An RNA of 177 nucleotides, treated with DMS and 2A3 and read out base by base. Source: RMDB library OK2TST, as collected in RNAgym. For DMS the reverse transcriptase was MarathonRT. The 2A3 profile rests on 23,200 reads.
[RMDB]
RNA sequence: GGGAACGACUCGAGUAGAGUCGAAAACACGGCGACGCGACGAUCAUGAACGUCAUGGCUCGCAGCAACGCCCGCUGCAGGGUCUCCCCCCAUAGCGGGGGCACCGCGAAUACGGCGAGGGUCACGGUACGUCAGUAAAUUUCGAUUUACUGACGUAAAAAGAAACAACAACAACAAC
Reactivity to DMS in 0.01 (KOAc 150mM, MgCl2 10mM, bicine 150mM(pH8.5), 24C), signal-to-noise 9, nucleotides 027 to 126: c090a100c090g000g010c030g020a090c110g010c040g010a060c080g010a080u010c100a080u010g010a120a120c120g010u000c040a070u000g010g010c030u000c020g010c050a050g000c040a090a130c110g010c050c040c080g000c020u000g010c040a110g010g000g000u000c050u000c030c010c000c000c010c020a120u010a080g020c120g000g010g010g000g020c270a010c030c010g010c040g000a090a070u000a090c050g000g010c020g010a090g010g000g000u000c040a070c080g000g010
Reactivity to 2A3 in 0.01 (KOAc 150mM, MgCl2 10mM, bicine 150mM(pH8.5), 24C), signal-to-noise 8, nucleotides 027 to 126: c060a010c020g040g020c020g030a040c040g030c020g030a030c040g030a090u080c050a090u150g100a190a070c060g100u030c060a030u060g030g000c010u010c030g000c010a010g000c010a050a080c050g050c020c030c020g000c020u030g000c040a150g020g000g040u010c070u050c030c000c000c010c000c010a090u160a030g050c170g010g010g000g000g000c010a020c010c030g030c020g050a040a050u140a080c050g020g000c010g010a070g030g020g010u040c030a010c080g000g080